[RMDB]
RNA sequence: GGGAACGACUCGAGUAGAGUCGAAAAGAUAUGGAUCGUGCAGAGGACGAUAAGGGCACCGUCUAUACUGGGUCGGAAACGACCUUAUAGACGGUGCCCUUUUGACGUCCGAUCACGAUCCUAAGUCCUCUGUAGUGUAGUUCGCUACACUACAGAGAAAAGAAACAACAACAACAAC
Reactivity to DMS in 0.01 (KOAc 150mM, MgCl2 10mM, bicine 150mM(pH8.5), 24C), signal-to-noise 3, nucleotides 027 to 126: g010a110u010a300u010g000g010a000u000c020g020u010g000c290a060g010a300g000g010a010c010g010a160u000a030a010g010g000g020c000a010c000c030g000u000c000u000a000u010a010c300u010g010g000g010u000c000g010g000a130a100a300c010g020a010c000c000u000u000a010u000a000g010a000c000g010g020u000g000c000c000c000u000u000u000u000g000a180c100g000u000c000c000g010a290u000c000a000c010g000a010u000c000c010u000a010a130g010u000c040